[RMDB]
RNA sequence: GGGAACGACUCGAGUAGAGUCGAAAAAAGGUCCUCCUAGCCAGCAGUUUUGUGCCCAUUUAUGCAGGACUGAAGCUAGUGGAAUACAAAGGGCAGAAGUGGGUGGACGGAGGCCUCACCAACGCUAGAUAUUUAGCUCGUUCGCGAGCUAAAUAUCAAAAGAAACAACAACAACAAC
Reactivity to DMS in 0.01 (KOAc 150mM, MgCl2 10mM, bicine 150mM(pH8.5), 24C), signal-to-noise 2, nucleotides 027 to 126: a140a020g000g010u020c010c000u000c050c000u000a240g050c030c010a090g000c020a080g010u000u010u000u000g020u000g000c070c020c030a120u000u010u000a060u020g020c040a060g010g010a110c080u000g000a160a120g020c080u020a030g030u000g020g010a240a100u000a050c080a030a080a130g020g020g010c010a140g010a060a050g010u000g000g000g040u000g000g020a100c210g020g000a010g010g000c010c020u000c010a090c040c030a060a090c220g000c150u000a070
Reactivity to 2A3 in 0.01 (KOAc 150mM, MgCl2 10mM, bicine 150mM(pH8.5), 24C), signal-to-noise 2, nucleotides 027 to 126: a000a010g050g010u140c010c010u000c000c000u050a040g060c000c020a040g020c060a060g020u050u040u050u100g150u050g030c000c000c000a050u070u130u060a170u160g080c030a020g050g210a060c040u150g030a130a040g050c010u020a000g030u030g100g070a070a010u110a090c090a050a140a020g010g030g000c020a010g000a080a010g040u100g050g000g100u030g020g010a030c020g000g000a010g000g000c000c000u000c000a030c000c000a060a040c050g020c040u080a070